[RMDB]
RNA sequence: GGGAACGACUCGAGUAGAGUCGAAAAGAUAUGGAGCAUCUAAGCUUCAGCCGCCUUCGGAAACGAAGGGCGGUGCUUACAUGAUGCUCCUAAGUCAAACCUCAUUGACGUUCGCGUCAAUGAGGAACUAUGGUUAGUGCUUCGGCACUAACCAUAGAAAAGAAACAACAACAACAAC
Reactivity to 2A3 in 0.01 (KOAc 150mM, MgCl2 10mM, bicine 150mM(pH8.5), 24C), signal-to-noise 2, nucleotides 027 to 126: g020a000u050a000u100g010g010a000g000c000a000u000c030u090a100a010g100c070u300u300c230a030g000c010c000g020c000c000u000u000c010g090g040a050a020a020c010g010a040a060g160g010g000c010g010g000u040g060c030u100u150a050c020a190u210g000a000u000g000c010u000c000c000u000a040a010g030u000c040a080a100a220c020c000u000c000a000u000u000g000a020c010g020u060u010c300g040c000g190u000c000a000a000u010g000a000g000g010a000a020
Reactivity to DMS in 0.01 (KOAc 150mM, MgCl2 10mM, bicine 150mM(pH8.5), 24C), signal-to-noise 2, nucleotides 027 to 126: g030a000u010a300u000g000g000a000g000c000a000u000c010u000a100a100g020c100u000u030c290a280g000c000c000g000c010c000u000u000c000g010g000a070a050a250c000g010a020a030g020g040g060c000g000g020u010g000c080u020u020a120c280a140u000g010a040u000g020c000u020c010c000u000a000a020g030u000c010a080a090a150c000c000u000c000a020u000u000g020a010c000g020u000u000c280g040c020g000u000c000a000a010u000g000a030g000g020a030a020